[RMDB]
RNA sequence: GGGAACGACUCGAGUAGAGUCGAAAAAUGCGCAUUAUAAUGCUACGUACGCGCGAUAUCGAUUAGCCGAUAUGCCGAUAUGCUAAUAUAUCGAUCGGCAUUAUAUAUACGUAGCGCGCGCGCUAUAUCUGAUGAGAGCGUUCGCGCUCUCAUCAGAAAAAGAAACAACAACAACAAC
Reactivity to DMS in 0.01 (KOAc 150mM, MgCl2 10mM, bicine 150mM(pH8.5), 24C), signal-to-noise 1, nucleotides 027 to 126: a160u000g000c060g040c000a130u000u000a120u020a060a080u000g010c010u000a050c020g040u000a030c140g020c050g010c020g000a070u000a160u000c070g010a100u000u000a050g030c010c000g000a040u000a020u000g020c140c020g010a000u000a070u020g000c140u000a050a090u000a090u000a070u000c190g000a060u000c000g000g010c000a040u010u000a010u010a150u010a170u020a050c010g020u000a000g000c000g020c170g010c050g020c040g020c140u000a040u010a050